[RMDB]
RNA sequence: GGGAACGACUCGAGUAGAGUCGAAAAAUAAAUAAAGUGUACCAAAUGGUAGGUACACACCAAGUGUGCGUUGGUCGCACAGAACCAGCAGUCAAUAGAGACUGCAAAACCAAACCAAAGAAAAAAACCUAAAAAUGAGAUUCGUCUCAUUUUUAGGAAAAGAAACAACAACAACAAC
Reactivity to 2A3 in 0.01 (KOAc 150mM, MgCl2 10mM, bicine 150mM(pH8.5), 24C), signal-to-noise 2, nucleotides 027 to 126: a020u030a000a050a000u180a080a090a020g000u010g000u000a000c000c000a020a020a180u160g140g000u060a100g000g000u000a000c000a000c000a010c000c020a130a110g090u020g000u000g060c110g040u090u150g140g030u190c030g020c010a000c020a020g000a000a100c090c040a010g020c000a000g000u000c010a090a000u040a270g270a050g010a060c030u010g000c000a020a000a000a020c010c010a020a020a020c020c030a110a070a000g170a060a100a030a030a000a040a020
Reactivity to DMS in 0.01 (KOAc 150mM, MgCl2 10mM, bicine 150mM(pH8.5), 24C), signal-to-noise 2, nucleotides 027 to 126: a060u010a000a050a060u010a000a160a220g000u000g000u000a000c030c010a070a110a180u000g010g010u010a060g000g000u000a000c000a000c000a070c110c030a130a100g000u000g030u010g000c030g000u020u020g030g000u000c010g000c000a000c050a080g030a110a120c120c190a120g000c000a010g000u020c000a140a100u000a200g010a220g000a000c000u000g010c000a000a030a040a100c050c080a020a050a050c180c090a020a070a190g020a020a030a090a060a160a050a120
An RNA of 177 nucleotides, treated with 2A3 and DMS and read out base by base. It was measured as part of the RMDB library M2PK90. High DMS reactivity at an A or C suggests that its Watson-Crick edge is free. The DMS profile rests on 999 reads. The RNA was probed in 150 mM KOAc, 10 mM MgCl2 and 150 mM bicine (pH 8.5) at 24 C. DMS adducts were read by reverse transcription with MarathonRT.